[RMDB]
RNA sequence: GGGAACGACUCGAGUAGAGUCGAAAAUGCUCUUCGGAGCAGCGAAAGCGUACUACGUCCAUCGAUCUAUAUGUGCCGAUAAGGUUCUCCCAAAUAGGAGAACCUUUUGACGGCGCAUAUAGGGAGGACGUAUCGCCAAGUGAGGAUUCGUCCUCAAAAGAUGAUGACAAUUCGUUGUCAUCAUCUUAAAAGAAACAACAACAACAAC
Reactivity to DMS in 0.01 (KOAc 150mM, MgCl2 10mM, bicine 150mM(pH8.5), 24C), signal-to-noise 3, nucleotides 027 to 156: u000g000c000u000c010u020u010c290g060g020a020g020c020a060g000c060g010a090a120a050g030c020g020u000a080c110u000a000c000g000u000c000c010a230u000c170g020a050u000c000u000a010u010a010u000g020u000g000c000c000g030a160u000a030a020g020g010u000u000c000u000c000c000c030a020a130a270u000a060g000g010a030g000a010a010c000c010u000u000u000u000g020a180c050g000g010c000g000c010a000u000a000u000a010g000g010g010a040g010g010a030c000g000u000a000u000c000g010c010c020a080a190g020u000g000a000g030g000a070u000u000c120g010u020c000c000u010c000a010a050
Reactivity to 2A3 in 0.01 (KOAc 150mM, MgCl2 10mM, bicine 150mM(pH8.5), 24C), signal-to-noise 5, nucleotides 027 to 156: u070g000c010u010c000u030u080c260g140g000a010g000c010a010g000c070g120a140a060a010g000c000g040u040a080c070u000a020c020g000u000c000c010a170u300c050g020a030u010c000u000a010u000a000u010g010u000g000c000c020g030a050u010a040a000g000g000u000u000c000u010c000c030c020a200a300a140u270a120g000g000a000g000a000a010c000c020u010u010u000u030g040a020c010g000g000c000g000c000a000u000a000u000a000g000g000g010a020g000g010a000c010g000u010a020u170c000g000c020c000a070a020g070u040g040a010g010g000a010u040u090c190g070u010c050c000u000c000a070a110